Structure probing data (DMS and 2A3) for a 177-nucleotide construct. Source: RMDB library RFMREP, as collected in RNAgym. The 2A3 profile rests on 5,244 reads. DMS adducts were read by reverse transcription with MarathonRT. 2A3 adducts were read by reverse transcription with SuperScript II with manganese. Reactivities are given for positions 27 through 126. The reactions ran in a buffer of 150 mM KOAc, 10 mM MgCl2 and 150 mM bicine (pH 8.5), at 24 C.
[RMDB]
RNA sequence: GGGAACGACUCGAGUAGAGUCGAAAAACUGCUUUCGAGCAGUAAGAGUACAUGUGAUGAAGCAAAUCAGUAUGAAUAAAAUGAUACUGUAAACGCUUUCUGAUGUAAUAAUAAGGGUUCGCCCUUACUUUAAAAGUCAAUUCGUUGACUUUUAAAGAAAAGAAACAACAACAACAAC
Reactivity to DMS in 0.01 (KOAc 150mM, MgCl2 10mM, bicine 150mM(pH8.5), 24C), signal-to-noise 6, nucleotides 027 to 126: a030c000u000g010c000u000u000u010c170g020a010g030c010a010g000u000a050a090g010a190g010u000a010c020a020u000g020u010g010a120u000g010a030a020g010c000a080a200a150u000c000a010g010u000a010u000g010a090a110u000a070a060a100a160u010g000a020u000a000c000u000g000u000a040a110a180c280g010c000u000u000u000c020u000g010a020u000g010u000a020a070u010a050a130u000a020a010g000g000g010u000u020c290g010c010c000c000u000u000a020
Reactivity to 2A3 in 0.01 (KOAc 150mM, MgCl2 10mM, bicine 150mM(pH8.5), 24C), signal-to-noise 5, nucleotides 027 to 126: a000c010u010g030c000u070u070u090c200g070a000g000c010a000g000u020a030a040g110a030g040u060a010c020a030u110g050u050g140a070u070g030a020a000g000c000a000a010a130u090c000a000g020u010a010u040g130a240a090u170a160a140a030a050u140g020a000u010a010c000u010g020u090a050a150a020c100g000c000u100u150u020c020u050g110a010u000g010u020a060a070u100a220a040u060a050a040g030g000g010u020u080c150g090c010c000c000u000u010a020